RNA sequence: GGGAACGACUCGAGUAGAGUCGAAAAGAGCGGAUGGUGCAGAACACCUCCACCGACGCGAACUGGACGGUGUGUGACGGCCUCAACGCACCGUCGCGGGGCGGUGCGGAUGGCGUGGGUGUGACGGCAUCGAAACAGCAUUCGUGCUGUUUCGAUGAAAAGAAACAACAACAACAAC
Reactivity to 2A3 in 0.01 (KOAc 150mM, MgCl2 10mM, bicine 150mM(pH8.5), 24C), signal-to-noise 2, nucleotides 027 to 126: g060a000g030c080g030g030a140u120g080g020u080g020c080a050g040a120a010c010a030c050c010u050c010c000a020c010c020g030a020c040g070c030g080a130a070c100u070g030g020a040c020g040g000u050g000u030g070u090g100a030c040g070g030c010c000u020c030a010a050c000g000c000a000c010c000g010u020c000g010c070g060g040g000g000c030g000g030u040g000c000g000g000a090u070g000g000c030g030u060g000g000g020u050g040u060g030a060c060g000g000
Reactivity to DMS in 0.01 (KOAc 150mM, MgCl2 10mM, bicine 150mM(pH8.5), 24C), signal-to-noise 4, nucleotides 027 to 126: g000a080g020c050g010g010a080u010g010g000u000g010c020a120g020a180a240c050a060c010c000u010c050c000a030c020c040g000a110c050g010c050g010a100a090c090u010g000g000a050c020g010g010u000g020u020g010u000g010a080c090g010g000c060c030u000c080a090a080c010g010c000a010c000c000g010u000c010g000c200g010g000g020g010c010g010g000u000g020c010g000g000a070u000g000g020c240g010u000g010g010g010u000g000u000g010a180c120g000g010
The record gives the reactivity of an RNA of 177 nucleotides to 2A3 and DMS.
Conditions: 150 mM KOAc, 10 mM MgCl2 and 150 mM bicine (pH 8.5), 24 C.
The 2A3 profile rests on 3,267 reads.
High DMS reactivity at an A or C suggests that its Watson-Crick edge is free.
It was measured as part of the RMDB library OK2TRN.